[RMDB]
RNA sequence: GGGAACGACUCGAGUAGAGUCGAAAAGAUAUGGAUGGCGAAGAACACCGUUCGAUGAAAUCGGAAACGAUGGAGAACUUGGUGGGAGCCAUCCUAAGUCAAACAAGCUUCGUUCGCGAAGCUUGAACUGUAAGUUACUGUUCGCAGUAACUUACAGAAAAGAAACAACAACAACAAC
Reactivity to DMS in 0.01 (KOAc 150mM, MgCl2 10mM, bicine 150mM(pH8.5), 24C), signal-to-noise 6, nucleotides 027 to 126: g010a030u010a300u010g000g000a020u000g010g010c000g020a130a150g010a150a190c010a010c000c000g010u000u000c000g010a090u010g010a090a110a020u000c000g010g000a140a080a180c010g010a010u000g000g000a080g000a010a010c020u010u010g020g010u000g000g010g000a160g010c000c000a010u000c000c000u000a010a070g000u000c030a110a100a300c000a000a000g010c000u000u000c010g010u000u020c250g030c010g010a000a000g010c000u000u000g000a040a150
Reactivity to 2A3 in 0.01 (KOAc 150mM, MgCl2 10mM, bicine 150mM(pH8.5), 24C), signal-to-noise 5, nucleotides 027 to 126: g030a020u060a030u110g000g000a000u010g000g010c040g160a300a030g040a180a010c000a000c010c010g000u010u010c030g060a280u060g010a030a030a000u010c010g010g030a050a060a030c020g010a000u010g060g000a040g000a030a020c110u240u300g020g010u020g010g010g010a010g000c000c000a000u000c000c000u000a010a000g020u000c020a050a050a110c000a020a000g000c000u020u000c010g070u060u190c300g010c020g000a010a000g000c000u000u000g010a080a030
The record gives the reactivity of an RNA of 177 nucleotides to DMS and 2A3.
For DMS, 6,812 sequencing reads were counted.
The reactions ran in a buffer of 150 mM KOAc, 10 mM MgCl2 and 150 mM bicine (pH 8.5), at 24 C.
Values cover nucleotides 27 to 126.
For 2A3, 11,535 sequencing reads were counted.